[RMDB]
Source information
Chemical mapping of a 177-nucleotide RNA with 2A3 and DMS. The reactions ran in a buffer of 150 mM KOAc, 10 mM MgCl2 and 150 mM bicine (pH 8.5), at 24 C. For DMS the reverse transcriptase was MarathonRT.
RNA sequence: GGGAACGACUCGAGUAGAGUCGAAAAGAUAUGGAUCUCGAAGCUUUCGAUAAGAUGACAUCGGAAACGAUGUCCAUCUUUUGACGAAAGCCGAGAUCCUAAGUCAAAAGGCCCGUUCGCGGGCCAAUCCUCUAAGAAUGUUCGCAUUCUUAGAGGAAAAAGAAACAACAACAACAAC
Reactivity to 2A3 in 0.01 (KOAc 150mM, MgCl2 10mM, bicine 150mM(pH8.5), 24C), signal-to-noise 3, nucleotides 027 to 126: g000a000u050a030u210g010g000a000u000c000u010c010g070a300a070g010c040u030u020u010c040g120a100u010a300a010g000a010u000g010a000c000a000u010c010g010g030a050a050a030c010g000a000u010g000u000c070c000a010u000c000u000u060u040u130g210a180c080g020a010a000a000g000c010c000g000a000g000a000u000c000c000u000a000a000g000u000c000a040a050a070a300g060g000c100c080c010g080u070u070c300g010c030g120g000g050c000c000a000a040
Reactivity to DMS in 0.01 (KOAc 150mM, MgCl2 10mM, bicine 150mM(pH8.5), 24C), signal-to-noise 3, nucleotides 027 to 126: g020a040u010a300u010g020g000a030u000c000u010c000g010a180a170g010c000u000u000u010c000g030a190u000a030a030g020a010u000g010a030c000a000u010c000g020g000a070a080a170c000g010a010u000g000u000c120c090a000u000c000u010u000u010u010g010a210c140g010a020a010a010g030c020c010g000a030g010a010u000c000c000u000a020a140g000u010c010a090a080a220a280g010g030c000c000c000g040u000u020c180g010c010g030g040g000c000c000a000a030